The record gives the reactivity of an RNA of 177 nucleotides to DMS and 2A3. The data come from the RNA Mapping Database (RMDB), library OK2TRN. The RNA was probed in 150 mM KOAc, 10 mM MgCl2 and 150 mM bicine (pH 8.5) at 24 C. DMS adducts were read by reverse transcription with MarathonRT.
[RMDB]
RNA sequence: GGGAACGACUCGAGUAGAGUCGAAAAGCUUUCUGAGGCUCGUGACCUGGGGCACGGUCGUCCCGGAAGUUCAGCCUUUCCCUCCGUACAACGGAGCCAUCAGACGGGACACCUCAUACAUCCCAGACUAGUUACCUCAAUUCGUUGAGGUAACUAGAAAAGAAACAACAACAACAAC
Reactivity to DMS in 0.01 (KOAc 150mM, MgCl2 10mM, bicine 150mM(pH8.5), 24C), signal-to-noise 7, nucleotides 027 to 126: g010c070u000u000u000c050u010g010a080g000g010c160u010c090g030u010g010a120c130c030u010g010g010g010g020c060a090c120g010g010u010c130g010u000c000c000c020g010g000a110a110g010u000u000c130a100g000c030c050u000u000u000c030c050c000u000c060c040g010u010a100c280a100a120c050g020g000a030g010c070c040a080u010c050a040g010a180c050g010g010g010a040c030a120c040c020u000c080a080u000a110c130a090u000c000c000c010a100g000a300
Reactivity to 2A3 in 0.01 (KOAc 150mM, MgCl2 10mM, bicine 150mM(pH8.5), 24C), signal-to-noise 5, nucleotides 027 to 126: g010c020u060u130u050c030u070g040a040g000g020c030u020c120g050u080g060a080c010c030u030g020g000g010g000c050a010c040g010g060u070c070g010u000c030c000c010g000g040a060a030g030u090u140c090a020g020c010c000u020u060u030c010c010c000u030c030c040g060u120a200c050a180a040c180g040g000a010g030c000c010a170u080c010a020g070a080c010g010g000g000a000c000a020c000c020u050c020a040u060a100c030a040u030c010c000c000a010g020a020